This 207-nucleotide RNA was probed chemically with DMS. DMS adducts were read by reverse transcription with MarathonRT. The RNA was probed in 150 mM KOAc, 10 mM MgCl2 and 150 mM bicine (pH 8.5) at 24 C.
RNA sequence: GGGAACGACUCGAGUAGAGUCGAAAAAGCAUCAGCAGGGAUGGUAACAAUUUAUAAGGCUGUUGAAGAAAUAUUAAUAAGAGAUGCCAAAAGCCUGGACCCAGUCAAUGAGCGUCAGUGAAGAUAUAUAGGGCGCGAGUUACAUUUUAGAACUCAAAUAGGUACCACUAUUCGUAGUGGUACCUAUAAAAGAAACAACAACAACAAC
Reactivity to DMS in 0.01 (KOAc 150mM, MgCl2 10mM, bicine 150mM(pH8.5), 24C), signal-to-noise 1, nucleotides 027 to 156: a130g010c030a030u010c000a040g000c080a090g000g000g030a110u000g010g070u010a010a250c040a140a120u000u010u010a080u000a110a160g000g040c030u000g000u000u030g000a000a160g010a130a110a120u030a110u000u060a020a190u000a120a070g000a260g000a050u000g010c000c040a070a020a090a240g020c030c040u000g010g000a180c050c000c030a140g010u000c070a080a090u000g000a150g030c000g000u000c030a140g010u000g010a040a050g030a110u000a080u000a140u010a110g040g040g080c070g050c010g000a070g060u000u000a070c050a110u000u000u000u000a070g000a140a180c010u010c000a050a060